Annotation
Chemical mapping of a 207-nucleotide RNA with DMS. The reactions ran in a buffer of 150 mM KOAc, 10 mM MgCl2 and 150 mM bicine (pH 8.5), at 24 C. Values cover nucleotides 27 to 156. For DMS the reverse transcriptase was MarathonRT. DMS (dimethyl sulfate) methylates the pairing face of unpaired adenines and cytosines.

RNA sequence: GGGAACGACUCGAGUAGAGUCGAAAAUUUUGUUAGUGGAUGCAUCCAUUAAGCAUAAGCAUGCUGCCCUACUCUCCAUCUUGGAAACUGAGAUUGGCUGUGAAUAUUAAACAGAUGCAUGUAAAGUUUCAUAAAUUUAGAGUACCUAAGCAGUCAGCUCCCAGUGUUUUUUCGAAAACACUGGGAGAAAAGAAACAACAACAACAAC
Reactivity to DMS in 0.01 (KOAc 150mM, MgCl2 10mM, bicine 150mM(pH8.5), 24C), signal-to-noise 1, nucleotides 027 to 156: u000u030u000u000g000u000u020a050g050u020g010g010a070u000g050c110a170u000c040c020a080u000u010a110a080g000c070a060u000a110a260g000c060a120u000g000c030u010g030c030c020c020u000a040c030u000c040u000c030c020a090u000c110u020u020g040g000a040a050a090c020u020g010a120g000a150u000u000g040g030c010u000g000u000g010a100a170u010a210u010u010a060a080a040c030a100g000a070u000g020c060a000u000g040u000a090a110a050g000u010u000u050c010a070u010a010a060a100u000u000u000a030g000a080g020u010a010c010c020u000a100a100g000c030a050g000u000c030a030g000